An RNA of 177 nucleotides, treated with 2A3 and DMS and read out base by base. The reactions ran in a buffer of 150 mM KOAc, 10 mM MgCl2 and 150 mM bicine (pH 8.5), at 24 C. For DMS the reverse transcriptase was MarathonRT. The 2A3 profile rests on 3,302 reads. The DMS profile rests on 1,961 reads.
RNA sequence: GGGAACGACUCGAGUAGAGUCGAAAAGAUAUGGAGCUGUGAUGGUUAACGAUGAAAUCUUUCGGAAACGAAAGAUGGAGUUACCAUCCAGCUCCUAAGUCAAAAGGCAGUUGUUCGCAACUGCCAACGCAUAUCCUUACUUCGGUAAGGAUAUGCGAAAAGAAACAACAACAACAAC
Reactivity to 2A3 in 0.01 (KOAc 150mM, MgCl2 10mM, bicine 150mM(pH8.5), 24C), signal-to-noise 2, nucleotides 027 to 126: g020a000u110a050u130g010g020a010g000c010u020g090u300g170a010u000g000g080u260u300a100a010c060g110a300u060g010a020a000a030u010c020u000u000u010c000g000g060a030a080a120c000g010a000a000a010g010a010u000g000g010a000g000u060u000a000c000c000a000u020c000c000a000g010c000u000c000c000u000a030a000g010u010c000a000a020a030a080g020g030c010a000g010u010u000g060u100u230c300g000c160a010a000c000u000g000c030c000a060a000
Reactivity to DMS in 0.01 (KOAc 150mM, MgCl2 10mM, bicine 150mM(pH8.5), 24C), signal-to-noise 2, nucleotides 027 to 126: g010a050u000a300u010g020g000a000g020c000u000g020u040g000a020u000g000g030u020u000a020a010c020g000a140u010g030a100a140a000u000c000u000u000u000c000g000g020a100a120a190c010g020a000a000a000g000a000u000g000g020a050g010u000u000a030c020c000a010u000c000c000a010g020c000u000c000c000u020a000a060g000u000c030a120a040a120a190g030g000c000a020g040u010u010g010u010u000c230g050c010a000a010c020u000g000c000c000a020a030